Description
Chemical mapping of a 207-nucleotide RNA with 2A3 and DMS. The 2A3 profile rests on 2,627 reads.

RNA sequence: GGGAACGACUCGAGUAGAGUCGAAAAAUACAAGGGGAGGUUUCGGUCAAAUGUUGUAUGCAGAAAGCGUGAGGAAGGUAGCACUUAGACACUCACGAGUAGCGGUUCGGCAGUAGUGCUAAAAUGAGACAGUACGAAAAGUUCGCUUUUCGUACAACUUUCUACAAACCUUCGGGUUUGUAGAAAGAAAAGAAACAACAACAACAAC
Reactivity to 2A3 in 0.01 (KOAc 150mM, MgCl2 10mM, bicine 150mM(pH8.5), 24C), signal-to-noise 4, nucleotides 027 to 156: a010u110a020c060a010a040g010g010g020g020a040g010g050u010u030u180c050g010g050u060c060a060a030a110u110g010u070u030g040u080a080u100g020c030a010g100a100a090a020g050c030g020u040g010a020g020g020a040a040g030g000u050a010g010c010a010c060u060u050a050g020a070c030a000c070u040c000a020c020g030a020g020u050a010g030c060g010g040u040u060c030g040g000c010a010g030u090a000g020u010g010c010u060a050a050a040a050u080g000a030g030a030c050a040g000u010a000c000g000a000a000a000a010g010u020u080c120g040c130u010u000u000u000c000g000u000a000c000a000a000
Reactivity to DMS in 0.01 (KOAc 150mM, MgCl2 10mM, bicine 150mM(pH8.5), 24C), signal-to-noise 2, nucleotides 027 to 156: a140u010a090c060a090a070g010g020g020g030a060g030g040u010u000u000c050g010g010u000c060a020a130a080u000g010u000u010g020u000a070u010g030c040a120g010a090a080a130g020c020g020u000g020a040g040g010a070a070g000g040u000a070g000c030a100c050u000u000a140g010a140c030a050c020u010c030a080c030g010a160g010u000a070g050c020g010g000u000u000c030g020g000c070a070g020u010a070g030u000g010c030u010a020a050a090a100u000g010a180g020a090c100a100g000u000a030c010g000a010a010a020a010g010u000u010c300g040c010u000u010u000u000c000g040u000a000c010a040a050
DMS (dimethyl sulfate) methylates the pairing face of unpaired adenines and cytosines.